[RMDB]
RNA sequence: GGGAACGACUCGAGUAGAGUCGAAAAAUUUGCAUUUGGAAUGGCACGUUCCAGAUAUGGUGCAGACCGAAUGGUACCAAUGAACGUUCAACAACGCCGUAAAUACCAAAAGCGACGACCGAGUUCACGUGGUAUGCGAGUUCGCUCGCAUACCACGAAAAGAAACAACAACAACAAC
Reactivity to DMS in 0.01 (KOAc 150mM, MgCl2 10mM, bicine 150mM(pH8.5), 24C), signal-to-noise 1, nucleotides 027 to 126: a000u000u020u000g000c000a210u010u000u000g000g000a100a090u000g000g000c140a080c060g000u000u000c040c300a130g010a180u000a090u000g000g010u010g040c020a040g000a100c140c090g020a050a100u000g000g010u000a020c010c040a050a130u000g000a030a030c010g040u000u000c190a030a040c110a080a060c150g010c000c000g040u000a090a020a090u000a160c010c020a030a020a110a050g010c000g010a010c020g000a180c010c000g000a080g000u000u000c140a160
Reactivity to 2A3 in 0.01 (KOAc 150mM, MgCl2 10mM, bicine 150mM(pH8.5), 24C), signal-to-noise 1, nucleotides 027 to 126: a000u150u140u230g000c010a000u000u000u050g080g050a120a000u050g000g070c040a020c060g000u000u020c060c040a000g100a090u160a180u080g010g000u010g000c000a030g080a020c080c060g110a080a080u160g060g030u020a060c010c000a020a040u020g000a050a000c010g050u140u180c060a090a110c000a100a070c180g020c000c010g060u090a030a000a130u100a110c010c000a050a000a000a000g020c000g010a050c010g020a010c010c040g020a050g140u050u110c070a050
Notes:
Conditions: 150 mM KOAc, 10 mM MgCl2 and 150 mM bicine (pH 8.5), 24 C. An RNA of 177 nucleotides, treated with DMS and 2A3 and read out base by base. Reactivities are given for positions 27 through 126. Reactivities are rounded to 0.1 and cut off at 0 and 3.